[RMDB]
This 207-nucleotide RNA was probed chemically with 2A3 and DMS. For 2A3, 7,279 sequencing reads were counted. Values cover nucleotides 27 to 156. 2A3 adducts were read by reverse transcription with SuperScript II with manganese. Values are in units of 0.01, from 0 to 300, in steps of 10. The DMS profile rests on 8,182 reads. It was measured as part of the RMDB library M2RFPK.
RNA sequence: GGGAACGACUCGAGUAGAGUCGAAAAUCACCAGAUGCUGCCUCACCUGAUCACUGAUGGCUCAACGGUAUCCGGCGGUACAACUGAAUACUUGUAGCUGCCUUUUGAGCGGGUUGGCUGCAAUCCGAAAAGAGGACACACUUCGGUGUGUCCUCAACAAGGUUAAGAAGUUCGCUUCUUAACCUUGAAAAGAAACAACAACAACAAC
Reactivity to 2A3 in 0.01 (KOAc 150mM, MgCl2 10mM, bicine 150mM(pH8.5), 24C), signal-to-noise 6, nucleotides 027 to 156: u070c020a040c040c000a000g000a020u030g000c020u020g010c010c000u060c040a020c000c000u010g000a020u030c010a010c040u060g020a070u070g080g010c000u010c050a100a050c060g040g000u010a010u030c030c020g020g000c020g080g150u220a100c080a070a010c060u050g020a060a030u040a040c030u050u170g030u090a010g030c020u010g010c000c000u030u030u040u110g010a010g000c030g000g010g010u050u060g020g000c020u020g020c010a000a170u030c010c000g040a050a030a020a060g010a000g000g010a000c000a000c000a000c010u040u070c120g010g000u000g000u000g010u000c000c000u000c000a000a000
Reactivity to DMS in 0.01 (KOAc 150mM, MgCl2 10mM, bicine 150mM(pH8.5), 24C), signal-to-noise 3, nucleotides 027 to 156: u000c020a100c010c010a050g000a050u000g020c030u010g000c030c010u000c260a050c010c010u000g000a060u010c030a060c030u000g030a050u000g000g010c020u000c020a110a050c040g000g000u010a010u000c000c010g040g020c010g030g030u010a090c180a140a070c040u000g010a040a030u000a040c030u000u000g000u000a050g010c000u000g000c020c010u000u000u000u000g010a080g000c030g010g000g020u000u020g020g020c030u010g000c010a080a100u000c000c020g020a110a090a110a130g010a040g020g020a040c000a010c000a010c010u000u000c280g030g010u000g020u000g000u000c000c000u000c000a000a050